[RMDB]
RNA sequence: GGGAACGACUCGAGUAGAGUCGAAAAAACUCUGUGGCAGAGAGAGGCCAGGCUGCUGCCACCAGGAGAGUCCCAACCAGAUCCCUCUCCUGCAUGUCCAGCUCUCUAGACAUGUCAACAGGCCACCGUGGGUGCAAGCCCAAUGCCUUCCUGUGAACUUUUAGUAUCAUUUCGAUGAUACUAAAAGAAAAGAAACAACAACAACAAC
Reactivity to 2A3 in 0.01 (KOAc 150mM, MgCl2 10mM, bicine 150mM(pH8.5), 24C), signal-to-noise 3, nucleotides 027 to 156: a000a010c050u040c040u060g000u010g000g020c000a000g000a000g010a010g020a040g040g030c040c040a030g070g010c040u090g000c000u020g020c010c000a010c010c000a020g030g010a010g020a030g040u050c030c020c000a020a090c040c020a040g050a160u080c000c010c010u010c010u010c000c010u000g000c010a010u030g000u030c020c030a020g040c070u030c000u000c010u110a030g000a010c000a020u030g020u060c050a060a050c020a130g010g040c000c010a030c050c040g050u040g000g000g010u060g040c030a070a020g010c000c000c000a010a020u050g030c010c020u080u080c030c020u100g060u100g150a110a100
Reactivity to DMS in 0.01 (KOAc 150mM, MgCl2 10mM, bicine 150mM(pH8.5), 24C), signal-to-noise 2, nucleotides 027 to 156: a020a010c030u010c010u000g020u000g000g000c000a110g000a110g020a090g030a100g020g020c060c060a090g000g040c030u000g000c010u020g020c030c020a060c060c150a060g040g000a040g010a300g020u030c020c020c010a100a190c110c080a210g020a120u010c010c050c010u010c020u000c000c010u000g000c020a030u000g000u010c010c010a070g040c200u000c190u010c030u010a040g010a060c000a030u020g000u000c060a060a080c040a090g000g020c030c020a070c080c060g010u000g000g010g070u000g000c160a110a180g040c000c010c020a040a070u000g020c010c060u000u010c020c020u000g000u010g010a100a210

An RNA of 207 nucleotides, treated with 2A3 and DMS and read out base by base. The RNA was probed in 150 mM KOAc, 10 mM MgCl2 and 150 mM bicine (pH 8.5) at 24 C. The 2A3 profile rests on 3,145 reads.